[RMDB]
RNA sequence: GGGAACGACUCGAGUAGAGUCGAAAAUCCUACCGCACACUGGGUGAGGACCCGCAGUAUCACGAGGAAUGGGUGACAGCGGCGGUGGAACGGACCAUACCCGUACCAGUGGACGGGAUGGAGUACCGGUUAGGAGCAGUUUCGACUGCUCCUAACCAAAAGAAACAACAACAACAAC
Reactivity to DMS in 0.01 (KOAc 150mM, MgCl2 10mM, bicine 150mM(pH8.5), 24C), signal-to-noise 2, nucleotides 027 to 126: u000c000c000u000a240c010c000g040c300a070c000a030c040u000g030g000g060u000g020a200g040g000a150c050c010c020g000c040a090g050u000a160u000c040a050c070g030a100g050g030a120a220u000g000g000g000u010g020a050c130a050g020c080g000g010c040g000g010u000g000g010a140a050c070g010g000a060c000c020a030u000a120c070c000c000g010u000a120c000c030a060g000u000g020g000a040c000g010g000g000a020u010g010g000a190g020u040a100c040c060
Reactivity to 2A3 in 0.01 (KOAc 150mM, MgCl2 10mM, bicine 150mM(pH8.5), 24C), signal-to-noise 2, nucleotides 027 to 126: u020c030c000u020a020c010c000g000c000a030c000a000c080u040g000g000g070u130g090a100g090g100a020c000c050c000g000c010a030g050u150a020u190c030a020c090g080a080g130g200a190a140u260g150g000g030u030g000a020c040a040g000c020g040g020c030g000g040u030g040g000a150a040c040g060g110a080c000c020a010u070a180c040c000c000g020u080a130c010c000a020g040u050g080g000a000c000g010g000g020a000u070g040g000a020g010u060a090c020c050